This 177-nucleotide RNA was probed chemically with 2A3 and DMS. For DMS, 1,290 sequencing reads were counted. The RNA was probed in 150 mM KOAc, 10 mM MgCl2 and 150 mM bicine (pH 8.5) at 24 C.

RNA sequence: GGGAACGACUCGAGUAGAGUCGAAAAACAGGCCUCAGACCAGUACCGGUCUGUGGCCUGGGGGUUGAGGACCCCUGCUCUAGGCUGGUACUGCUGAUGCUUAAGACGAAUAGUGUUCGCACUAUUCCCACAUAGAGGUGUUCGCACCUCUAUGUGGAAAAGAAACAACAACAACAAC
Reactivity to 2A3 in 0.01 (KOAc 150mM, MgCl2 10mM, bicine 150mM(pH8.5), 24C), signal-to-noise 2, nucleotides 027 to 126: a000c010a000g000g010c000c010u000c000a040g030a140c190c030a020g030u070a040c010c030g000g020u000c000u000g040u040g040g010c020c010u020g000g010g000g000g000u060u140g230a150g100g130a050c000c000c000c010u040g020c000u020c010u020a030g020g000c000u030g030g020u020a020c020u000g000c020u040g010a020u020g000c020u080u090a100a050g130a090c080g020a010a000u000a010g020u020g050u110u040c240g030c070a010c000u000a010u000u010c030
Reactivity to DMS in 0.01 (KOAc 150mM, MgCl2 10mM, bicine 150mM(pH8.5), 24C), signal-to-noise 2, nucleotides 027 to 126: a100c090a040g010g000c000c010u000c000a000g000a050c160c030a080g010u010a010c090c090g000g000u000c000u000g010u000g000g030c050c260u000g010g000g010g000g000u000u010g040a200g000g000a180c020c010c000c030u000g000c040u000c040u000a020g010g010c020u000g000g010u010a010c010u000g010c050u000g020a040u010g010c030u010u000a120a100g000a110c160g000a010a010u000a000g010u000g020u000u020c170g040c000a020c000u000a010u010u000c000